RNA sequence: GGGAACGACUCGAGUAGAGUCGAAAAGCAGGCACGCCCAUACCCACAUAAAGGUACGCGCUCUCGUACACUCAGCUGAGCGCAAUGCUGAGCGGCAUCGCCGGCAUCCGUCGGUGCGCGGCACGUGAUAGGAGUCGCGUUUCGACGCGACUCCUAUAAAAGAAACAACAACAACAAC
Reactivity to 2A3 in 0.01 (KOAc 150mM, MgCl2 10mM, bicine 150mM(pH8.5), 24C), signal-to-noise 1, nucleotides 027 to 126: g030c110a060g000g000c090a010c050g030c000c000c000a000u000a000c040c060c000a000c000a020u180a100a170a000g070g000u060a070c000g020c000g000c000u030c020u000c000g090u090a050c050a020c000u110c080a010g010c050u020g040a000g040c030g050c000a000a080u150g000c030u020g070a000g090c050g170g000c000a220u200c000g000c010c060g000g000c010a120u100c000c010g000u000c050g000g080u000g140c160g020c000g100g040c000a000c030g100u130g000